The record gives the reactivity of an RNA of 177 nucleotides to DMS and 2A3.
[RMDB]
RNA sequence: GGGAACGACUCGAGUAGAGUCGAAAAUCAUACGACGCGGCCGUCGUACCCAACUCGGCGGCCAGGCCGUUCCAUGCGGCCCCGGCGGCCAUCAUCGGUCCUGCACCCGCGCCGGCGUACAUGCGUGCAUGAACCUACUUUUCGAAGUAGGUUCAUGAAAAGAAACAACAACAACAAC
Reactivity to DMS in 0.01 (KOAc 150mM, MgCl2 10mM, bicine 150mM(pH8.5), 24C), signal-to-noise 8, nucleotides 027 to 126: u010c140a140u000a070c070g000a040c040g010c080g010g010c020c010g010u000c000g010u000a070c030c040c080a120a100c190u000c040g020g010c010g010g010c010c010a040g010g000c000c000g010u000u010c150c160a090u010g010c030g010g000c010c020c040c030g000g010c020g010g000c030c050a050u010c120a090u000c100g000g000u000c020c050u000g020c060a100c070c030c030g010c050g020c010c010g000g000c060g010u000a050c110a070u000g010c100g020u000g010
Reactivity to 2A3 in 0.01 (KOAc 150mM, MgCl2 10mM, bicine 150mM(pH8.5), 24C), signal-to-noise 6, nucleotides 027 to 126: u100c010a020u070a150c070g020a020c010g050c050g060g000c030c020g020u000c000g020u060a120c030c000c010a040a100c080u060c040g010g000c010g000g000c000c000a000g000g000c000c010g030u160u100c120c060a120u230g010c000g000g000c000c010c000c010g020g010c000g050g030c060c010a100u120c020a040u110c050g030g010u030c000c050u070g000c060a060c000c020c010g040c010g000c020c000g020g020c010g020u020a030c010a050u160g040c030g060u050g020
The reactions ran in a buffer of 150 mM KOAc, 10 mM MgCl2 and 150 mM bicine (pH 8.5), at 24 C. The DMS profile rests on 15,425 reads. In probing experiments dimethyl sulfate is read out at A N1 and C N3, which are open when not base-paired. Source: RMDB library OK2TRN, as collected in RNAgym.